[RMDB]
RNA sequence: GGGAACGACUCGAGUAGAGUCGAAAAGAAAGAAAGACAGAACUCUGUAAAGUGAGGGAUUGCCUGGACCAGGUCGGCGGGCCUGCUCCAGUUUCCUUCGCUCUGCUCAACGGGCAGACCGCCACAAAAAACGCGUGGCUGUUCGCAGCCACGCGAAGCAUACAACUGAGUUCGCUCAGUUGUAUGCAAAAGAAACAACAACAACAAC
Reactivity to 2A3 in 0.01 (KOAc 150mM, MgCl2 10mM, bicine 150mM(pH8.5), 24C), signal-to-noise 1, nucleotides 027 to 156: g040a010a070a000g090a030a070a020g070a000c080a020g080a080a120c060u070c040u160g050u230a090a070a030g010u020g010a000g000g030g000a050u100u170g120c000c000u010g010g010a000c050c000a010g000g000u010c060g040g080c020g040g000g000c020c000u000g000c010u000c010c000a000g000u010u040u000c000c000u010u020c020g010c000u010c000u010g000c000u000c050a110a060c070g000g000g000c000a000g030a110c020c020g010c020c020a080c080a040a190a010a020a000a020c010g010c020g010u000g000g000c000u020g050u040u130c210g000c050a000g000c010c000a000c010g000c010g000a000a000

Annotation:
The record gives the reactivity of an RNA of 207 nucleotides to 2A3. The RNA was probed in 150 mM KOAc, 10 mM MgCl2 and 150 mM bicine (pH 8.5) at 24 C. The data come from the RNA Mapping Database (RMDB), library M2RFPK. The 2A3 profile rests on 876 reads. Reactivities are given for positions 27 through 156.